[RMDB]
RNA sequence: GGGAACGACUCGAGUAGAGUCGAAAACUUGUGAAACACAAUAUCAGUAAGAGAUUGAGCACACUCAAUACCUUAGAUUUUAUACUUUUCCUCCGAGGGAAAGUUGCCAAAGAUAUACAAAUAGCUGAAAGCUAUGCUGAUGACAGUGAAGGAGAAACUAAGCUGUACAAUUCGUUGUACAGCUUAGAAAAGAAACAACAACAACAAC
Reactivity to 2A3 in 0.01 (KOAc 150mM, MgCl2 10mM, bicine 150mM(pH8.5), 24C), signal-to-noise 5, nucleotides 027 to 156: c020u060u070g030u040g110a100a150a000c030a010c020a090a080u070a040u190c020a030g020u040a080a010g060a010g010a120u010u010g010a030g020c110a030c010a100c150u030c010a020a080u180a280c000c020u040u060a040g010a110u040u090u060u090a110u080a060c010u030u000u020u030c020c010u010c090c210g100a250g010g000g020a000a000a020g000u000u060g030c000c020a050a130a020g040a060u100a010u040a170c030a010a110a010u010a020g010c020u190g140a170a070a000g000c000u000a020u050g010c010u020g010a030u040g020a020c050a050g050u020g070a050a040g070g060a070g060a030a000a000
Reactivity to DMS in 0.01 (KOAc 150mM, MgCl2 10mM, bicine 150mM(pH8.5), 24C), signal-to-noise 3, nucleotides 027 to 156: c050u000u000g040u010g010a170a110a160c060a060c040a050a150u000a100u000c030a130g020u010a070a110g010a070g010a100u000u010g000a100g030c090a130c130a090c040u010c020a030a070u000a040c020c010u000u000a090g010a120u000u000u020u000a100u000a090c040u010u000u010u000c000c000u000c210c150g040a170g010g020g000a010a020a030g000u000u000g010c100c080a070a110a100g010a120u000a070u000a090c070a040a050a040u000a020g020c000u000g000a080a100a120g000c020u000a010u000g000c020u010g010a100u000g000a090c100a100g020u010g010a070a070g010g000a110g000a120a090a200